[RMDB]
RNA sequence: GGGAACGACUCGAGUAGAGUCGAAAAGAGCAUUAGGAAAAAUAGCUAAUGCACACUCGGCUUAAUACCUCAGUGAUGGGUUGAUAGGUGCAGCAAAUCACUAUGGUACAUGUUUACCUUUGUAACAAGCCUGCACAUCCUGCACAUGUACCCCAGAGCGCGAGUCUCGUUUCGACGAGACUCGCGCAAAAGAAACAACAACAACAAC
Reactivity to 2A3 in 0.01 (KOAc 150mM, MgCl2 10mM, bicine 150mM(pH8.5), 24C), signal-to-noise 1, nucleotides 027 to 156: g040a000g000c000a010u010u000a010g030g060a050a110a100a090a300u300a060g040c000u000a000a000u000g050c000a000c000a000c000u020c010g010g000c000u050u020a140a000u080a190c020c000u040c030a050g000u030g130a120u060g050g010g030u010u020g110a040u210a150g210g000u060g000c000a020g010c000a040a040a100u080c030a010c040u050a070u130g040g000u000a040c020a100u160g020u090u160u000a030c000c000u000u100u100g060u030a060a020c050a040a090g020c020c050u000g000c000a010c000a020u030c010c020u010g000c020a040c000a050u020g010u000a050c000c000c040c020a030g030a000